[RMDB]
RNA sequence: GGGAACGACUCGAGUAGAGUCGAAAAGAAAUUAAGUUUCCUUUACACUUCUCAAACCGGGAUCAAGAGAAGCAAAGCAUCCCUCAUAUCCACGAUGGAGGGUGUCGUGGAGUAUACUGUACCAAAAAGAGCGAACACGGCUUCGGCCGUGUUCGAACACAGUAGCUAUGUUCGCAUAGCUACUGUGAAAAGAAACAACAACAACAAC
Reactivity to 2A3 in 0.01 (KOAc 150mM, MgCl2 10mM, bicine 150mM(pH8.5), 24C), signal-to-noise 5, nucleotides 027 to 156: g050a020a050a010u180u160a110a030g050u030u030u050c020c000u040u040u090a050c050a040c010u040u020c020u010c050a160a100a100c050c060g060g020g020a040u050c070a210a050g020a020g010a050a020g050c100a040a040a000g020c000a050u040c010c030c000u040c030a080u100a070u100c010c010a000c020g000a010u030g050g090a040g040g060g040u050g000u000c010g000u000g000g000a020g020u000a010u020a050c080u080g080u170a100c040c060a050a070a020a020a020g110a030g070c010g000a000a000c000a000c000g000g000c020u040u060c160g050g000c000c000g000u000g000u000u000c000g000a000a000
Reactivity to DMS in 0.01 (KOAc 150mM, MgCl2 10mM, bicine 150mM(pH8.5), 24C), signal-to-noise 2, nucleotides 027 to 156: g020a080a090a080u000u000a040a150g010u000u000u000c020c010u000u010u000a160c100a090c030u000u000c000u000c020a050a080a170c130c100g030g050g010a100u000c130a140a300g010a020g000a010a020g020c060a050a060a100g000c100a070u000c030c010c010u000c090a160u010a070u000c010c020a080c050g000a080u000g000g030a080g020g000g030u000g020u000c010g090u000g000g000a030g000u000a090u000a040c060u000g000u000a180c050c060a040a060a090a130a070g000a140g000c020g030a000a010c030a060c000g010g000c010u000u030c300g080g000c000c000g040u010g000u000u000c000g010a010a050

The record gives the reactivity of an RNA of 207 nucleotides to 2A3 and DMS. The reactions ran in a buffer of 150 mM KOAc, 10 mM MgCl2 and 150 mM bicine (pH 8.5), at 24 C. Reactivities are rounded to 0.1 and cut off at 0 and 3. The 2A3 profile rests on 4,176 reads. For DMS, 2,646 sequencing reads were counted.